Chemical mapping of a 177-nucleotide RNA with 2A3 and DMS. High DMS reactivity at an A or C suggests that its Watson-Crick edge is free. The 2A3 profile rests on 2,965 reads. The data come from the RNA Mapping Database (RMDB), library VIROID. Reactivities are given for positions 27 through 126. For 2A3 the reverse transcriptase was SuperScript II with manganese. DMS adducts were read by reverse transcription with MarathonRT. Conditions: 150 mM KOAc, 10 mM MgCl2 and 150 mM bicine (pH 8.5), 24 C.
RNA sequence: GGGAACGACUCGAGUAGAGUCGAAAAGAGGGGUGUAGUGGUAAAGAGGCGGGGAACGCCGAGUAGGGUUCUCUCCCAAGAAGGUGAAGAGAAGGCAAGAAUCGGACGUCUUCCCCAUAACGCUGGACUAUAUGAUUUCCUUCGGGAAAUCAUAUAGAAAAGAAACAACAACAACAAC
Reactivity to 2A3 in 0.01 (KOAc 150mM, MgCl2 10mM, bicine 150mM(pH8.5), 24C), signal-to-noise 3, nucleotides 027 to 126: g070a010g000g050g030g010u070g020u090a040g030u030g070g020u050a070a070a040g070a040g020g060c100g000g000g000g000a020a010c020g010c020c010g010a020g030u140a040g070g050g010u020u000c020u010c000u010c020c000c000a050a170g180a120a050g030g050u100g060a110a010g020a010g010a000a020g070g020c050a070a040g030a130a100u020c020g000g060a070c010g050u030c060u060u040c010c000c000c010a040u070a080a030c080g000c050u030g010g010a000
Reactivity to DMS in 0.01 (KOAc 150mM, MgCl2 10mM, bicine 150mM(pH8.5), 24C), signal-to-noise 4, nucleotides 027 to 126: g010a080g000g000g010g010u000g010u000a060g020u010g000g020u010a030a110a090g010a140g010g010c160g040g000g020g000a020a030c040g020c000c000g010a040g000u010a170g010g010g020u010u010c010u000c020u000c020c010c000a150a130g010a100a110g010g010u000g020a080a030g010a020g000a020a040g000g010c070a070a110g000a090a100u010c030g000g010a100c030g010u010c120u010u000c000c010c000c050a070u010a050a070c170g000c030u000g010g010a300